[RMDB]
Conditions: 150 mM KOAc, 10 mM MgCl2 and 150 mM bicine (pH 8.5), 24 C.
An RNA of 207 nucleotides, treated with 2A3 and DMS and read out base by base.
RNA sequence: GGGAACGACUCGAGUAGAGUCGAAAAAUGAACUCCGCACUGUUGUGAACGCACAAGUUAAUCGCUAGAGUAGGAUUGACCGAAACAAAUCGAUAGGGGUGCGUCUGUGUGGUAGGACUGACCGAAACAAAUCGAUAGGGGCGUGUCUGUGUGAUGGUGUAUGUCCUUUUUUCGAAAAGGACAUACAAAAAGAAACAACAACAACAAC
Reactivity to 2A3 in 0.01 (KOAc 150mM, MgCl2 10mM, bicine 150mM(pH8.5), 24C), signal-to-noise 2, nucleotides 027 to 156: a000u080g000a020a040c030u010c000c030g020c020a050c040u080g050u170u090g070u080g090a100a020c020g010c010a010c020a010a050g000u020u060a040a070u020c010g020c190u130a040g020a070g240u100a040g020g020a030u050u040g030a080c010c020g040a020a030a060c080a020a110a090u080c040g020a010u070a080g080g010g000g010u020g010c000g010u010c010u020g030u020g000u000g000g020u020a040g050g000a030c030u020g030a020c010c020g070a060a060a080c020a010a140a030u090c020g050a030u080a090g010g000g000g020c060g030u040g060u010c030u020g020u020g020u030g070a070u070g020g100
Reactivity to DMS in 0.01 (KOAc 150mM, MgCl2 10mM, bicine 150mM(pH8.5), 24C), signal-to-noise 2, nucleotides 027 to 156: a100u000g000a110a190c030u000c000c010g030c040a090c050u000g040u000u000g010u000g010a080a060c040g000c040a060c040a130a070g000u000u010a020a030u000c030g050c070u010a130g010a180g010u000a070g020g010a080u000u010g030a050c010c030g000a190a060a160c110a070a050a150u010c070g020a120u010a100g030g000g030g030u000g000c010g000u000c020u010g070u000g040u020g010g000u000a030g020g020a110c080u010g000a110c060c000g010a090a050a090c070a040a090a090u000c060g030a130u010a100g010g000g010g020c030g050u000g020u000c020u020g010u000g010u010g000a040u010g030g000
The data come from the RNA Mapping Database (RMDB), library OK3TST.